This 177-nucleotide RNA was probed chemically with 2A3 and DMS. The DMS profile rests on 1,513 reads. The 2A3 profile rests on 3,092 reads. 2A3 is a SHAPE reagent: it acylates the 2'-hydroxyl of flexible nucleotides of all four kinds.
RNA sequence: GGGAACGACUCGAGUAGAGUCGAAAAGGCCACGGCAGGUCGUCGUGUCCAGCAACCCGCGCGAUCGACAACAGAUCCACACACACCGAACCGGCCCGUAGCGCGCGGACCGCCACCGCUACCGCCAAGUAGACGUGUCUUUCGAGACACGUCUACUAAAAGAAACAACAACAACAAC
Reactivity to 2A3 in 0.01 (KOAc 150mM, MgCl2 10mM, bicine 150mM(pH8.5), 24C), signal-to-noise 4, nucleotides 027 to 126: g020g010c010c000a010c010g000g000c040a070g140g100u220c080g010u000c010g000u020g030u020c020c000a010g020c030a030a120c010c020c000g020c040g000c040g040a040u070c030g080a060c030a130a020c030a110g040a050u070c000c000a040c000a000c000a000c000a030c020c020g050a090a030c010c020g070g000c020c000c030g040u080a030g030c000g000c010g010c010g040g020a040c050c020g040c010c000a040c010c000g020c030u030a030c020c000g020c010c010a060
Reactivity to DMS in 0.01 (KOAc 150mM, MgCl2 10mM, bicine 150mM(pH8.5), 24C), signal-to-noise 2, nucleotides 027 to 126: g050g000c100c000a000c020g020g000c030a210g100g000u060c150g020u000c020g020u000g000u000c010c010a210g010c140a170a170c000c000c000g040c150g020c080g000a010u000c040g000a120c140a030a050c200a070g010a150u000c000c020a020c080a000c080a050c010a110c000c020g020a070a030c090c010g000g020c010c000c020g050u050a020g000c040g010c100g000c100g020g000a050c010c040g010c030c000a060c000c070g010c010u000a050c070c170g040c120c020a150